[RMDB]
RNA sequence: GGGAACGACUCGAGUAGAGUCGAAAAUACUAGCAUUCGGUUCCAACCCUGGAUGGAUACUCAAAGGUUGGCUGAGUUCGUUCCUCCGGCCUUGGUUCCGAUGCUCCAUCCAAGGCCGGAAACCAAAAACAUGUCCUGUAUUCGUACAGGACAUGUUAAAAGAAACAACAACAACAAC
Reactivity to DMS in 0.01 (KOAc 150mM, MgCl2 10mM, bicine 150mM(pH8.5), 24C), signal-to-noise 3, nucleotides 027 to 126: u010a100c120u000a070g010c090a090u000u000c030g000g000u000u000c000c000a030a040c020c010c030u000g000g010a040u010g000g010a150u000a060c160u000c030a070a050a090g000g000u010u000g000g020c160u000g010a020g010u000u000c020g000u000u000c010c000u000c000c000g000g000c010c010u000u000g000g010u010u000c100c050g000a060u000g010c060u000c030c030a070u000c010c010a020a010g000g010c000c000g000g000a010a010a070c130c150a020a060a090
Reactivity to 2A3 in 0.01 (KOAc 150mM, MgCl2 10mM, bicine 150mM(pH8.5), 24C), signal-to-noise 2, nucleotides 027 to 126: u220a050c080u060a030g070c030a090u020u060c010g000g000u060u000c030c000a000a010c000c000c010u020g080g050a050u080g130g140a120u120a260c040u040c090a050a030a000g020g000u010u020g020g010c050u060g000a010g040u140u120c000g000u020u010c010c000u000c010c000g000g000c000c000u000u030g010g000u070u120c050c030g030a050u130g060c040u040c010c000a020u010c000c000a000a000g000g000c000c000g000g000a010a000a020c010c000a000a040a000
Record summary:
The record gives the reactivity of an RNA of 177 nucleotides to DMS and 2A3. The DMS profile rests on 3,858 reads. The reactions ran in a buffer of 150 mM KOAc, 10 mM MgCl2 and 150 mM bicine (pH 8.5), at 24 C. For 2A3 the reverse transcriptase was SuperScript II with manganese. For 2A3, 2,588 sequencing reads were counted. The data come from the RNA Mapping Database (RMDB), library M2PK90. Values cover nucleotides 27 to 126.